Annotation
The data come from the RNA Mapping Database (RMDB), library OK2TRN. An RNA of 177 nucleotides, treated with DMS and 2A3 and read out base by base. Conditions: 150 mM KOAc, 10 mM MgCl2 and 150 mM bicine (pH 8.5), 24 C. DMS adducts were read by reverse transcription with MarathonRT. 2A3 adducts were read by reverse transcription with SuperScript II with manganese. For 2A3, 982 sequencing reads were counted.
[RMDB]
RNA sequence: GGGAACGACUCGAGUAGAGUCGAAAACUGACUUGAUGCUAUUACUGCAACUGAAAUCUAUAUCUCAACAAGGUUUGGUUACUGGUGAUGAGAUGCUAUUCUACCAUUUUUUAACUGAUCAAUCUUAUAAAUUAAUGGCAUUCGUGCCAUUAAUUUAAAAAGAAACAACAACAACAAC
Reactivity to DMS in 0.01 (KOAc 150mM, MgCl2 10mM, bicine 150mM(pH8.5), 24C), signal-to-noise 3, nucleotides 027 to 126: c070u010g010a130c140u000u010g010a090u010g000c040u010a110u010u010a060c090u000g040c020a030a040c050u000g000a060a070a050u000c040u000a070u000a080u000c050u000c070a090a090c160a090a140g010g000u000u010u010g020g000u000u000a040c070u000g020g000u010g010a080u010g010a040g000a060u010g010c110u010a060u000u000c050u000a110c080c000a010u000u000u020u010u000u000a040a120c080u000g010a080u000c050a090a080u010c020u000u000a240
Reactivity to 2A3 in 0.01 (KOAc 150mM, MgCl2 10mM, bicine 150mM(pH8.5), 24C), signal-to-noise 1, nucleotides 027 to 126: c000u000g060a020c010u070u100g070a050u060g040c000u030a040u140u190a120c030u060g000c000a030a030c060u070g040a030a030a060u000c030u020a120u050a050u200c020u020c080a040a110c050a120a000g040g000u030u120u100g070g020u110u030a050c030u060g070g030u060g040a060u030g040a050g010a050u020g000c010u070a070u140u080c000u000a050c000c020a040u050u030u000u020u020u140a090a120c030u040g060a030u170c040a120a030u030c030u040u120a080